RNA sequence: GGGAACGACUCGAGUAGAGUCGAAAAAUACACCAGCAGUAGGACGCAGCGACCGUCACAACAAGGUUGUGCUGGUAUCCGACGGUCGUAUAGCCCUGUCUUGCAGGUUGCCUUGCACUGACGUGCCACACCAUUUACAGAUUCGUCUGUAAAUGAACUUCUACACGACUUUCGAGUCGUGUAGAAGAAAAGAAACAACAACAACAAC
Reactivity to DMS in 0.01 (KOAc 150mM, MgCl2 10mM, bicine 150mM(pH8.5), 24C), signal-to-noise 2, nucleotides 027 to 156: a110u000a090c060a210c020c010a100g000c010a070g010u000a020g000g020a030c000g010c050a300g030c010g010a040c000c000g000u000c010a210c070a110a080c100a100a110g010g040u000u000g010u000g030c030u000g020g030u000a010u020c070c010g010a040c020g020g000u020c010g030u020a090u000a100g010c010c000c000u010g000u000c060u010u000g000c020a130g060g010u010u000g000c030c120u000u000g020c000a080c020u010g050a100c240g000u000g000c000c110a140c080a110c140c000a020u010u010u000a000c000a020g000a090u000u000c300g020u000c010u000g010u000a000a030a020u000g000a040a110
Reactivity to 2A3 in 0.01 (KOAc 150mM, MgCl2 10mM, bicine 150mM(pH8.5), 24C), signal-to-noise 4, nucleotides 027 to 156: a000u170a010c060a020c020c010a000g000c000a010g030u080a010g020g030a020c090g000c060a020g000c010g000a000c000c000g000u010c020a040c030a130a080c060a120a110g100g010u070u030g050u100g090c050u070g010g070u030a070u060c040c040g000a000c000g000g000u010c000g010u080a060u080a070g020c020c000c000u000g040u070c030u080u130g020c010a040g010g020u050u120g030c030c030u040u080g000c010a040c070u120g080a060c100g020u010g040c050c010a060c000a030c040c000a000u030u010u000a010c000a000g020a030u020u110c140g110u010c090u000g010u000a000a000a000u010g010a020a020